[RMDB]
RNA sequence: GGGAACGACUCGAGUAGAGUCGAAAAUAUCACCUUCUUGGUAAAUUUCUGUCACUUCUGAGUAUUCUUUACUUUUCAGCAUGACACUCAGUAUCAUCUGGCAUUAUAUUGUUCCUCUCCCUGAUGAGACAUUGUCAUCUUUGCAUCUGUGUCAUGUAUUCGGAGUGUUGUUCGCAACACUCCGAAUAAAAGAAACAACAACAACAAC
Reactivity to 2A3 in 0.01 (KOAc 150mM, MgCl2 10mM, bicine 150mM(pH8.5), 24C), signal-to-noise 2, nucleotides 027 to 156: u150a040u040c060a060c020c000u090u050c030u050u140g080g000u020a070a140a110u060u170u040c090u130g080u090c040a040c160u070u070c030u030g000a070g020u080a170u110u150c100u120u140u170a150c030u150u160u040u030c030a040g000c000a000u000g000a030c000a000c070u130c040a020g060u140a110u120c000a020u000c010u030g020g000c030a010u020u100a210u110a110u180u150g030u120u080c020c070u000c030u060c000c060c080u080g050a140u130g020a030g010a020c010a040u090u030g040u020c030a050u030c100u020u050u080g000c010a050u080c000u110g010u000g010u010c000a000u000g030u030

Structure probing data (2A3) for a 207-nucleotide construct. It was measured as part of the RMDB library OK3TST.